[RMDB]
This 177-nucleotide RNA was probed chemically with 2A3 and DMS. Values cover nucleotides 27 to 126. The data come from the RNA Mapping Database (RMDB), library OK2TRN. The reactions ran in a buffer of 150 mM KOAc, 10 mM MgCl2 and 150 mM bicine (pH 8.5), at 24 C.
RNA sequence: GGGAACGACUCGAGUAGAGUCGAAAAGAAAGGCAGCAAGUGCAGCCCACGCAGUGGCAUGCUUUUGCAUGCCCAGUCGAGCCCACGACUCAGGGCAGCUGCGACACUGAGGGCAGCUGCCGAAAGAACCUAGGCGUGAUUUCGAUCACGCCUAGGUAAAAGAAACAACAACAACAAC
Reactivity to 2A3 in 0.01 (KOAc 150mM, MgCl2 10mM, bicine 150mM(pH8.5), 24C), signal-to-noise 1, nucleotides 027 to 126: g080a010a040a000g000g010c080a040g010c050a020a230g120u100g170c090a020g000c000c030c020a050c020g100c070a050g060u150g060g000c050a070u050g020c000u170u200u190u300g040c040a060u020g000c000c010c000a030g000u020c000g010a040g000c050c000c000a020c010g070a020c000u060c140a090g060g010g110c010a000g010c010u010g000c010g010a010c030a010c170u210g070a260g050g060g000c000a040g070c000u010g040c000c020g000a000a000a030g000a010
Reactivity to DMS in 0.01 (KOAc 150mM, MgCl2 10mM, bicine 150mM(pH8.5), 24C), signal-to-noise 1, nucleotides 027 to 126: g000a090a050a160g000g030c010a030g030c030a130a120g000u000g000c090a110g030c020c130c000a090c100g030c120a060g050u000g010g000c010a000u000g020c030u000u020u000u020g050c030a040u000g040c010c030c020a050g000u000c030g000a130g010c000c000c010a290c040g000a020c000u000c180a170g030g020g000c100a140g000c000u030g000c000g030a140c110a250c150u000g020a060g010g000g000c020a010g020c000u000g000c020c000g000a030a060a180g010a120